[RMDB]
RNA sequence: GGGAACGACUCGAGUAGAGUCGAAAAGAACCAUAAUAAAACUGUGGAUAACUUACUAAAGUCUUAGGAGGAACUUGGUCAUAGUUGAUAUUGAAUAGAGAGAACAAGUGUCUGGGACUUUCUGCCACCGAGUAAUACUGUUCGCAGUAUUACUCGGAAAAGAAACAACAACAACAAC
Reactivity to 2A3 in 0.01 (KOAc 150mM, MgCl2 10mM, bicine 150mM(pH8.5), 24C), signal-to-noise 1, nucleotides 027 to 126: g000a020a080c010c000a050u020a040a130u100a080a190a030a050c070u030g000u020g000g000a060u050a220a090c030u030u150a050c050u090a140a030a050g000u020c020u010u030a040g020g060a030g000g120a090a000c000u010u010g010g010u020c020a040u080a110g140u110u140g070a090u030a070u130u150g030a030a050u090a050g120a000g000a000g000a070a030c000a040a020g010u020g020u020c030u040g000g000g010a000c000u060u000u000c030u050g050c030c000a090
Reactivity to DMS in 0.01 (KOAc 150mM, MgCl2 10mM, bicine 150mM(pH8.5), 24C), signal-to-noise 1, nucleotides 027 to 126: g010a230a200c000c020a080u010a020a100u020a070a070a070a300c140u000g020u000g010g020a150u000a040a190c050u050u000a180c060u000a020a020a010g010u000c000u000u000a050g020g000a090g030g000a080a040c000u000u010g000g000u000c060a070u010a090g020u000u000g000a130u020a140u000u010g010a070a030u000a070g010a060g000a050g000a000a000c020a000a010g000u000g000u020c030u000g010g000g000a060c040u010u000u010c170u000g010c090c090a060